This 177-nucleotide RNA was probed chemically with DMS and 2A3. It was measured as part of the RMDB library OK2TST. The RNA was probed in 150 mM KOAc, 10 mM MgCl2 and 150 mM bicine (pH 8.5) at 24 C. 2A3 adducts were read by reverse transcription with SuperScript II with manganese.

[RMDB]
RNA sequence: GGGAACGACUCGAGUAGAGUCGAAAAGAUUUCUCGUCCCAUGGUUCCUACACACCAGCUGAAGGGCUUCCACGUAAAGAGCUGGCCUGGCGCUCAGACAGACUGCCUGAAAGGAGUCUUGGAGAGACACGGCAUAUUGUUUCGACAAUAUGCCGUGAAAAGAAACAACAACAACAAC
Reactivity to DMS in 0.01 (KOAc 150mM, MgCl2 10mM, bicine 150mM(pH8.5), 24C), signal-to-noise 3, nucleotides 027 to 126: g010a150u000u010u000c010u000c040g000u000c070c020c000a110u020g000g010u010u000c010c010u000a090c170a080c180a120c070c000a040g000c030u020g000a220a120g000g000g000c060u010u020c050c030a080c140g000u010a060a110a070g020a070g010c040u000g000g000c070c040u010g010g030c270g000c120u020c020a060g000a130c100a080g000a070c030u000g000c030c010u000g000a080a100a120g000g000a030g000u000c010u000u010g010g000a160g010a070g000a140
Reactivity to 2A3 in 0.01 (KOAc 150mM, MgCl2 10mM, bicine 150mM(pH8.5), 24C), signal-to-noise 2, nucleotides 027 to 126: g030a040u060u180u060c040u030c030g090u100c040c010c020a000u040g010g010u050u030c010c000u030a030c090a000c010a020c050c010a000g010c010u090g040a090a100g060g040g020c080u150u020c040c020a140c080g020u040a110a130a020g090a040g000c040u030g020g000c020c010u010g030g010c030g010c000u040c010a060g050a200c020a010g020a040c030u100g100c050c000u080g070a120a090a050g020g020a010g000u010c050u070u050g060g010a080g000a000g000a030
Values cover nucleotides 27 to 126. For DMS, 1,704 sequencing reads were counted.